[RMDB]
RNA sequence: GGGAACGACUCGAGUAGAGUCGAAAACGAGCUCUUCCUGACAUUGCCUAUGUGUCUGUGAAGAGCACAUCCAAGUAGGCUACGCUUGCGUUCCCGUCUGAGAACGUAAGAAGAGAUGAACAGACUAGCUCUCGGAAGGCCCGCCCGCAGGCAAGAACUGUAGGUUAAUGUUCGCAUUAACCUACAGAAAAGAAACAACAACAACAAC
Reactivity to 2A3 in 0.01 (KOAc 150mM, MgCl2 10mM, bicine 150mM(pH8.5), 24C), signal-to-noise 4, nucleotides 027 to 156: c040g040a040g010c000u000c000u010u000c000c000u000g000a000c000a000u080u100g010c010c010u050a050u070g000u000g000u010c000u010g080u150g030a000a000g010a000g060c000a010c000a010u030c020c030a070a010g010u000a000g020g000c010u020a010c020g000c000u000u000g000c000g010u000u000c000c030c000g000u010c020u010g030a040g000a020a000c000g030u040a020a000g010a000a020g010a010g020a110u190g090a110a050c020a010g010a010c010u010a030g020c000u000c010u020c060g010g020a040a010g040g000c010c030c030g050c010c030c010g070c060a020g020g000c050a060a040g040a090a050
Reactivity to DMS in 0.01 (KOAc 150mM, MgCl2 10mM, bicine 150mM(pH8.5), 24C), signal-to-noise 2, nucleotides 027 to 156: c050g000a150g030c010u000c000u000u010c000c000u010g000a020c030a030u000u010g030c050c060u000a100u020g050u010g000u000c000u000g030u020g020a040a020g000a020g010c010a020c060a050u000c050c090a120a110g030u000a040g050g030c020u000a180c070g010c000u000u000g000c020g010u000u000c010c000c030g020u010c140u000g000a090g010a010a020c010g040u000a000a040g010a070a070g010a230g030a090u010g020a090a130c050a090g000a060c030u000a150g020c030u000c000u010c020g020g000a090a070g010g020c030c040c060g000c010c010c040g000c040a100g000g000c030a080a080g010a120a220